Structure probing data (DMS and 2A3) for a 177-nucleotide construct. The RNA was probed in 150 mM KOAc, 10 mM MgCl2 and 150 mM bicine (pH 8.5) at 24 C.

[RMDB]
RNA sequence: GGGAACGACUCGAGUAGAGUCGAAAAGAUAUGGAUCAGAAUGGAGCGACUGCUUCGGAAACGAAGCACUCGCUAUGAAGUUCUGAGUCCUAAGUCAAACGUGUUGACGGUUCGCCGUCAACACGAACAAGGAUAUCACCUUCGGGUGAUAUCCUUGAAAAGAAACAACAACAACAAC
Reactivity to DMS in 0.01 (KOAc 150mM, MgCl2 10mM, bicine 150mM(pH8.5), 24C), signal-to-noise 2, nucleotides 027 to 126: g000a030u000a010u010g000g000a030u010c000a000g000a010a020u000g000g000a000g030c010g010a000c190u010g010c020u000u010c000g020g000a000a000a010c000g000a000a020g020c010a000c070u000c000g070c010u000a160u010g000a100a260g000u000u000c000u010g000a060g000u000c000c000u010a010a100g000u000c000a060a060a180c000g010u010g000u000u000g000a020c020g010g020u000u010c240g030c010c000g020u000c000a010a000c000a000c000g020a070a090
Reactivity to 2A3 in 0.01 (KOAc 150mM, MgCl2 10mM, bicine 150mM(pH8.5), 24C), signal-to-noise 1, nucleotides 027 to 126: g020a020u020a020u040g000g000a000u000c000a010g030a020a020u040g000g050a000g010c000g030a010c000u030g010c010u000u000c000g000g000a000a010a010c010g010a000a020g000c000a010c000u000c000g000c020u040a300u020g000a010a000g000u000u000c000u000g020a010g120u080c000c010u000a000a000g000u000c040a130a010a080c040g000u010g010u000u010g000a010c010g050g030u030u050c300g060c090c000g000u000c000a000a010c020a000c000g010a040a010